RNA sequence: GGGAACGACUCGAGUAGAGUCGAAAAGAUAUGGAGAGCAUUAAGUUCCAUACGAGCGAUAAGCUCAUGUCGGAAACGACAUCGAGCUUUUGACGCUCUAUAUGGAACUUAAUGCUCUCCUAAGUCACUUAUCCGUAGUCUUCGGACUACGGAUAAGAAAAGAAACAACAACAACAAC
Reactivity to DMS in 0.01 (KOAc 150mM, MgCl2 10mM, bicine 150mM(pH8.5), 24C), signal-to-noise 2, nucleotides 027 to 126: g030a040u000a300u000g010g000a010g020a010g010c000a020u000u000a000a000g000u000u000c000c000a020u020a080c300g000a000g000c010g010a090u000a030a040g010c010u000c000a030u000g000u010c010g000g030a170a070a270c020g010a000c020a000u010c110g000a010g000c010u000u000u000u010g030a260c090g010c010u010c000u030a110u000a000u010g000g010a020a010c000u000u000a000a000u000g020c000u000c000u000c000c000u000a000a040g010u010c050a240